RNA sequence: GGGAACGACUCGAGUAGAGUCGAAAAACGAGCAUGCGAAAGGAUGGCUAGGUGGUAUCGGUCGUCGGACGGAGGAUGCAUGCGAAAGGAUGGAGGUCAGCAUGCGAAAGGAUGGGGACUCCGUGGCAUGCGAAAGGAUGGACGAACCAUGCAUGCGCUACUGAUGAUUCUUCGGAAUCAUCAGUAGAAAAGAAACAACAACAACAAC
Reactivity to 2A3 in 0.01 (KOAc 150mM, MgCl2 10mM, bicine 150mM(pH8.5), 24C), signal-to-noise 3, nucleotides 027 to 156: a000c070g020a020g010c040a010u050g010c040g130a090a040a040g110g040a040u060g060g000c060u050a100g020g060u050g010g010u100a100u130c030g020g020u030c030g000u000c010g020g050a070c020g010g030a030g030g010a030u090g020c030a000u040g010c030g060a100a040a000g130g010a010u080g000g020a040g030g020u030c040a030g050c010a030u020g030c000g080a110a030a010g090g020a040u110g000g000g040g020a030c010u000c010c000g010u030g050g000c000a010u030g000c010g020a020a030a040g120g020a040u100g010g030a000c020g010a050a030c010c010a030u080g000c010a000u020g000c040g000
Reactivity to DMS in 0.01 (KOAc 150mM, MgCl2 10mM, bicine 150mM(pH8.5), 24C), signal-to-noise 1, nucleotides 027 to 156: a070c080g010a300g000c020a070u000g000c000g020a140a060a190g030g030a090u000g020g050c060u000a040g020g020u000g010g000u010a060u000c060g010g050u010c060g070u010c020g000g000a010c160g020g000a140g000g040a200u020g020c020a050u000g010c050g020a070a120a130g020g000a170u010g010g020a140g060g000u010c010a270g000c020a020u000g000c000g020a080a080a080g000g020a100u010g010g010g050g000a110c030u010c000c030g000u000g010g030c000a050u000g010c040g000a100a060a080g010g010a120u000g050g000a050c040g040a070a190c010c030a130u020g000c010a040u020g010c000g010
Chemical mapping of a 207-nucleotide RNA with 2A3 and DMS. Reactivities are rounded to 0.1 and cut off at 0 and 3. Source: RMDB library OK3TST, as collected in RNAgym. Conditions: 150 mM KOAc, 10 mM MgCl2 and 150 mM bicine (pH 8.5), 24 C.